[RMDB]
An RNA of 177 nucleotides, treated with DMS and 2A3 and read out base by base.
RNA sequence: GGGAACGACUCGAGUAGAGUCGAAAAGGCAGGCAAGAAUACGCAAGCUGUGGAGGUGCCAAAUGAUUAAGGCGCUUAUUACGGCAGGGGUCGUGUUCUUCUCAGGCCUGGCUGCUCUGCCUGCUCAGGCCUGGUUAAGGUUCGCCUUAACCAGGCCAAAAGAAACAACAACAACAAC
Reactivity to DMS in 0.01 (KOAc 150mM, MgCl2 10mM, bicine 150mM(pH8.5), 24C), signal-to-noise 4, nucleotides 027 to 126: g000g040c010a020g000g010c080a040a010g000a020a020u010a050c060g000c040a210a130g000c010u000g030u000g010g000a000g010g000u010g020c020c010a080a090a200u030g010a180u060u060a160a130g000g000c000g010c000u000u010a040u020u020a030c020g010g000c020a150g030g000g000g000u030c000g000u000g030u000u010c030u010u010c080u010c060a110g000g020c040c060u000g010g000c030u020g000c050u010c040u000g000c010c000u010g000c030u010c110a090
Reactivity to 2A3 in 0.01 (KOAc 150mM, MgCl2 10mM, bicine 150mM(pH8.5), 24C), signal-to-noise 8, nucleotides 027 to 126: g010g010c000a000g000g020c020a030a110g020a020a020u090a050c040g010c050a060a080g000c010u000g000u020g040g030a030g010g010u010g000c000c000a070a120a080u300g060a120u250u230a150a100g000g000c000g000c000u030u090a270u160u070a100c020g020g000c010a030g040g070g060g040u170c040g020u010g040u060u050c000u160u030c040u030c040a020g000g040c000c020u020g030g030c030u020g000c000u010c020u070g010c000c000u020g010c010u030c070a030
For DMS the reverse transcriptase was MarathonRT. For DMS, 9,918 sequencing reads were counted.